[RMDB]
RNA sequence: GGGAACGACUCGAGUAGAGUCGAAAAGAUAUGGACGUUUCGACAUGAAAUAGGGUCGGAAACGACCCGAAUUUCAACAGCGAGAACGUCCUAAGUCAAAAGGUAGGGUCCUUCGGGACCCUACCAAGCUACGAACCAAGUUCGCUUGGUUCGUAGCAAAAGAAACAACAACAACAAC
Reactivity to DMS in 0.01 (KOAc 150mM, MgCl2 10mM, bicine 150mM(pH8.5), 24C), signal-to-noise 1, nucleotides 027 to 126: g000a050u000a190u030g000g000a000c000g030u010u000u000c000g010a100c070a220u010g000a010a010a020u000a220g000g010g020u010c010g010g000a020a040a140c030g030a000c000c000c000g010a040a050u000u000u000c000a040a180c180a110g040c010g000a030g000a010a000c010g040u000c010c000u000a030a100g010u010c020a080a090a100a070g010g000u010a010g010g000g000u000c000c010u000u000c180g000g010g030a010c000c000c000u010a000c000c040a000a000

An RNA of 177 nucleotides, treated with DMS and read out base by base.
The RNA was probed in 150 mM KOAc, 10 mM MgCl2 and 150 mM bicine (pH 8.5) at 24 C.
Source: RMDB library TTRDEL, as collected in RNAgym.